Chemical mapping of a 170-nucleotide RNA with 2A3 and DMS. Source: RMDB library 15KLIB, as collected in RNAgym. High DMS reactivity at an A or C suggests that its Watson-Crick edge is free.

[RMDB]
RNA sequence: GGGAACGACUCGAGUAGAGUCGAAAAGAUCUGAAGAAAGGGCCACAUGAAUUCUGUUCACAGCAUACGCUUUAUAUUAAGGAUGGCGACGAUGGUUACUUCCUUCCUUAUCCAGACCCUUCAAGAAAACGGGCAUUGUUCGCAAUGCCCAAAAGAAACAACAACAACAAC
Reactivity to 2A3 in 0.01 (KOAc 150mM, MgCl2 10mM, bicine 150mM(pH8.5), 24C), signal-to-noise 4, nucleotides 027 to 129: g030a070u000c020u000g000a000a000g010a010a080a020g050g000g010c050c040a010c010a050u090g080a050a060u100u070c040u070g060u090u100c060a070c030a100g030c000a060u060a160c050g010c030u040u090u090a120u020a010u130u170a020a000g080g010a070u010g000g050c030g000a010c000g040a050u050g040g050u050u050a120c010u040u000c020c000u000u000c040c000u060u040a030u030c010c000a000g030a080c010c020c000u050u070c110a080a020g070a070a010a000a000c020
Reactivity to DMS in 0.01 (KOAc 150mM, MgCl2 10mM, bicine 150mM(pH8.5), 24C), signal-to-noise 1, nucleotides 027 to 129: g060a070u030c040u000g010a060a020g030a050a030a050g000g040g020c040c040a000c190a110u020g060a050a080u040u030c060u000g000u000u040c080a050c150a090g000c020a140u000a100c130g000c050u030u040u000a070u060a000u030u050a100a050g000g000a000u030g000g000c100g010a020c060g040a120u000g000g040u010u000a000c100u000u000c040c020u000u000c070c040u050u000a000u050c140c070a070g000a060c020c000c020u020u050c000a040a140g030a020a040a030a070c230